[RMDB]
RNA sequence: GGGAACGACUCGAGUAGAGUCGAAAACGAUAUGCGCAGCUAUGAUUGAAGCUUGGGGUUAUCCGGAUUUGUUGCAGCAAAUACGUAAGUUUUAUAUGUGGCUUAGUGUACAGGAUGACUUCAGGCAAGACAUGGCCGUGUUCGCACGGCCAUGUCUAAAAGAAACAACAACAACAAC
Reactivity to 2A3 in 0.01 (KOAc 150mM, MgCl2 10mM, bicine 150mM(pH8.5), 24C), signal-to-noise 1, nucleotides 027 to 126: c030g090a030u100a000u300g070c050g110c130a060g130c000u000a060u020g050a300u090u170g120a160a060g010c000u000u000g000g000g000g000u000u000a000u000c000c000g020g000a000u000u030u000g150u000u190g000c000a000g010c000a030a030a030u040a000c010g060u110a000a000g000u050u000u170u050a300u100a100u160g300u170g010g000c000u000u000a200g110u060g040u000a090c070a070g000g000a000u000g000a000c150u030u000c000a000g040g000c000a010